[RMDB]
RNA sequence: GGGAACGACUCGAGUAGAGUCGAAAAGGAACAAUCUCAAGAAGAGGAGGAUUCCCCGAGACGCUGACGGAAACCCCGGGAACAAGGAAACAGGAGGAGGAUCGGUAGAAAAGAGCGAGACCUCCGAAGCCACAGCGCUUCGGCGCUGUGAAAAGAAACAACAACAACAAC
Reactivity to 2A3 in 0.01 (KOAc 150mM, MgCl2 10mM, bicine 150mM(pH8.5), 24C), signal-to-noise 3, nucleotides 027 to 129: g050g020a000a030c000a040a120u030c020u030c030a000a030g080a020a000g000a050g020g030a020g000g000a020u030u050c030c000c000c040g010a020g010a010c040g000c090u080g010a000c060g050g000a040a040a060c010c000c030c000g040g030g000a020a000c030a020a020g020g000a030a060a000c020a010g050g010a020g000g000a020g010g000a050u000c010g060g040u100a020g100a070a100a050a000g040a030g060c040g000a010g020a070c010c000u010c040c020g010a010a020g000c010
Reactivity to DMS in 0.01 (KOAc 150mM, MgCl2 10mM, bicine 150mM(pH8.5), 24C), signal-to-noise 6, nucleotides 027 to 129: g030g020a100a060c150a130a120u010c050u040c070a110a100g000a070a070g030a070g000g020a020g010g020a110u020u010c050c030c020c070g050a080g000a070c190g000c090u010g000a050c140g050g040a100a090a140c100c000c020c000g020g000g030a080a040c000a060a030g020g050a080a050a060c130a050g030g030a050g000g000a040g000g000a130u040c060g020g040u030a060g000a080a080a110a070g030a070g050c100g040a100g010a090c070c010u020c010c030g030a060a000g010c130
Source: RMDB library 15KLIB, as collected in RNAgym.
Chemical mapping of a 170-nucleotide RNA with 2A3 and DMS.
The reactions ran in a buffer of 150 mM KOAc, 10 mM MgCl2 and 150 mM bicine (pH 8.5), at 24 C.
The 2A3 profile rests on 6,601 reads.
Reactivities are rounded to 0.1 and cut off at 0 and 3.
The DMS profile rests on 12,395 reads.